[RMDB]
Structure probing data (DMS and 2A3) for a 207-nucleotide construct. It was measured as part of the RMDB library OK3TST. The RNA was probed in 150 mM KOAc, 10 mM MgCl2 and 150 mM bicine (pH 8.5) at 24 C. For DMS, 10,462 sequencing reads were counted. Values cover nucleotides 27 to 156.

RNA sequence: GGGAACGACUCGAGUAGAGUCGAAAACGUUGAACAUGUUUAUGCUGUUCUUCUUUGGUCGCGAGAUUGAGCAUUAUUUAGGCAGUGGUCGUUUUACUUUGGCUUAUAUUGUGAGCGGGAUUGGGGCCUCGGCAACUGUUCUGCUGAUGGAUCCGCAAAAAUGAUUUAGUUUCGACUAAAUCAUUUUAAAAGAAACAACAACAACAAC
Reactivity to DMS in 0.01 (KOAc 150mM, MgCl2 10mM, bicine 150mM(pH8.5), 24C), signal-to-noise 3, nucleotides 027 to 156: c060g020u000u010g010a080a110c070a120u000g010u000u000u000a070u000g030c030u000g010u010u010c050u000u010c030u000u000u010g020g040u000c050g030c080g020a120g020a130u000u000g010a110g030c010a090u000u000a060u010u000u000a090g020g040c010a060g030u000g030g050u000c060g010u000u000u000u000a050c070u000u000u000g020g030c040u000u000a080u000a080u000u010g020u000g010a100g020c030g020g010g020a140u000u000g000g010g010g020c030c030u000c050g030g020c000a020a070c070u010g010u010u000c080u010g010c010u000g020a090u010g030g000a200u000c010c020g020c210a040
Reactivity to 2A3 in 0.01 (KOAc 150mM, MgCl2 10mM, bicine 150mM(pH8.5), 24C), signal-to-noise 4, nucleotides 027 to 156: c040g020u020u070g040a060a030c030a070u120g040u070u140u100a100u160g050c020u020g000u000u020c000u030u020c020u060u080u070g060g000u090c040g000c060g030a040g060a140u060u110g060a030g040c020a020u040u100a030u090u200u090a060g010g000c030a010g010u040g040g050u030c060g020u080u040u100u080a070c050u060u040u100g020g000c020u060u010a060u030a040u200u120g050u040g070a040g010c030g030g020g050a080u070u100g020g010g020g020c000c000u010c010g010g000c000a040a060c040u030g080u170u070c020u030g010c020u010g010a030u090g020g010a040u040c010c030g030c050a050